[RMDB]
RNA sequence: GGGAACGACUCGAGUAGAGUCGAAAAUCUGCACGAUCCGCAGGACAUCAUCUACAAUCGGGUGCGGGAUCUGUUCGUGGACUCCGAUUGCAGCAGCAGUGUGAAACAGCAUGGCAAGAGUCACGCCCCGCCAGCCUGACUUCGGUCAGGCUGGCGGAAAAGAAACAACAACAACAAC
Reactivity to 2A3 in 0.01 (KOAc 150mM, MgCl2 10mM, bicine 150mM(pH8.5), 24C), signal-to-noise 1, nucleotides 027 to 126: u000c000u010g000c010a010c300g000a000u080c110c140g000c070a070g000g000a000c000a040u170c000a000u000c000u120a070c020a000a300u050c000g000g000g170u030g090c030g000g000g000a000u020c050u120g170u050u240c100g010u110g080g000a000c000u030c050c000g280a240u040u040g000c020a100g000c000a010g000c080a080g060u060g000u000g290a000a300a030c070a010g000c080a080u110g010g000c000a120a080g000a000g000u000c000a000c000g000c000c020
Structure probing data (2A3) for a 177-nucleotide construct.
For 2A3 the reverse transcriptase was SuperScript II with manganese.
The reactions ran in a buffer of 150 mM KOAc, 10 mM MgCl2 and 150 mM bicine (pH 8.5), at 24 C.
The data come from the RNA Mapping Database (RMDB), library OK1LIB.